[RMDB]
Structure probing data (2A3 and DMS) for a 207-nucleotide construct. For DMS, 2,351 sequencing reads were counted. For DMS the reverse transcriptase was MarathonRT. The 2A3 profile rests on 2,396 reads.

RNA sequence: GGGAACGACUCGAGUAGAGUCGAAAACCAGCCAUCGCUCUUCAGCGGAGGCGCUUACUCCAAGGCUGUUAGAGUGGCAUAAUUCGCGCUUGAGCUCUGCUCGCGCAAGUAAGCUCCGUUUUGUAUUGCCUGAUGUGCUUAGCGGGUAUUUAUUCGGGUUUAUGAGCAUGUUCGCAUGCUCAUAAACAAAAGAAACAACAACAACAAC
Reactivity to 2A3 in 0.01 (KOAc 150mM, MgCl2 10mM, bicine 150mM(pH8.5), 24C), signal-to-noise 4, nucleotides 027 to 156: c000c010a010g070c000c040a140u190c120g010c030u000c000u040u000c020a000g000c010g010g020a000g010g000c030g040c020u020u040a040c010u000c000c010a050a030g070g000c010u020g070u200u030a010g010a010g010u180g040g000c000a060u190a120a140u190u180c080g000c000g000c060u100u290g050a000g000c090u070c190u300g000c000u010c040g000c000g000c020a000a010g020u010a010a000g010c010u010c010c000g000u000u010u030u050g030u030a040u020u110g020c000c030u060g030a070u050g030u030g030c000u000u010a000g010c000g000g030g050u150a180u040u220u050a150u100u080c010g000g000
Reactivity to DMS in 0.01 (KOAc 150mM, MgCl2 10mM, bicine 150mM(pH8.5), 24C), signal-to-noise 1, nucleotides 027 to 156: c000c000a220g000c100c020a170u010c060g070c000u000c030u050u000c040a090g000c030g020g010a300g020g000c120g010c040u000u000a060c050u000c010c030a100a300g000g030c010u000g040u000u000a020g010a120g070u000g020g000c100a090u010a070a120u000u010c070g010c000g010c080u000u020g010a020g040c000u010c120u010g070c000u000c050g000c090g020c010a040a000g000u010a040a060g000c000u000c000c050g010u000u020u010u000g030u000a060u000u000g010c020c030u010g010a140u020g000u020g000c040u000u000a030g020c000g000g010g020u000a060u000u000u000a070u010u000c030g000g020